Annotation: An RNA of 177 nucleotides, treated with 2A3 and DMS and read out base by base. 2A3 adducts were read by reverse transcription with SuperScript II with manganese. The RNA was probed in 150 mM KOAc, 10 mM MgCl2 and 150 mM bicine (pH 8.5) at 24 C. For DMS the reverse transcriptase was MarathonRT.
[RMDB]
RNA sequence: GGGAACGACUCGAGUAGAGUCGAAAAGGAGAUCGAAGACGACCGACGUCAGCACGGUCCGGAUGUAGGUCCGCAUGCAUCCAAGUUGACGAAACUUUACGAUUUCCAAAGCGGACAAGAAGUCAAACGGUAAUACGGCUUUCGAGCCGUAUUACCGAAAAGAAACAACAACAACAAC
Reactivity to 2A3 in 0.01 (KOAc 150mM, MgCl2 10mM, bicine 150mM(pH8.5), 24C), signal-to-noise 2, nucleotides 027 to 126: g000g000a020g000a010u040c050g010a140a070g030a070c030g010a000c010c000g080a110c040g140u210c090a010g070c120a020c100g000g000u010c010c010g000g000a000u000g000u000a000g000g000u000c000c000g030c000a010u000g000c000a000u000c030c000a000a030g000u000u010g040a070c110g010a080a020a000c000u000u040u050a030c000g040a010u000u000u000c000c000a010a120a000g020c000g040g010a000c000a000a140g090a130a000g070u150c140a130a020a110
Reactivity to DMS in 0.01 (KOAc 150mM, MgCl2 10mM, bicine 150mM(pH8.5), 24C), signal-to-noise 1, nucleotides 027 to 126: g000g000a050g000a060u000c000g000a300a180g000a050c090g000a110c030c000g030a000c090g000u080c080a170g000c080a010c300g000g000u010c030c300g000g110a000u060g040u000a010g000g030u000c000c030g000c000a050u050g090c000a000u000c030c070a020a130g000u000u120g000a200c050g000a180a030a080c000u000u000u080a040c140g000a170u000u040u000c000c040a020a000a090g080c000g000g000a000c000a250a000g020a290a040g000u030c010a050a030a190
For DMS, 779 sequencing reads were counted.